Conditions: 150 mM KOAc, 10 mM MgCl2 and 150 mM bicine (pH 8.5), 24 C. Structure probing data (DMS) for a 177-nucleotide construct. Reactivities are rounded to 0.1 and cut off at 0 and 3. Values cover nucleotides 27 to 126. DMS adducts were read by reverse transcription with MarathonRT.

RNA sequence: GGGAACGACUCGAGUAGAGUCGAAAAAAAAAGAUAUGGACUCUUGACACCCGAGAGAUGUACUCACAGCUGUCGGAAACGACAGUCACAGGUACAUGGAAUGGGUGUAAGAGUCCUAAGUCAAAAAGUGAGUACUAAAGUUCGCUUUAGUACUCACAAAAGAAACAACAACAACAAC
Reactivity to DMS in 0.01 (KOAc 150mM, MgCl2 10mM, bicine 150mM(pH8.5), 24C), signal-to-noise 1, nucleotides 027 to 126: a040a050a080a100a020g000a050u000a300u000g010g000a030c000u000c000u010u030g030a030c030a000c020c000c010g020a060g000a300g010a000u000g000u000a010c000u000c040a120c300a300g000c010u000g010u010c010g010g010a140a110a220c010g030a030c010a000g000u000c010a080c210a160g030g000u000a000c010a000u000g010g000a300a110u000g000g000g000u000g000u000a010a010g000a000g000u000c000c000u000a000a040g010u000c010a100a030a050a100a080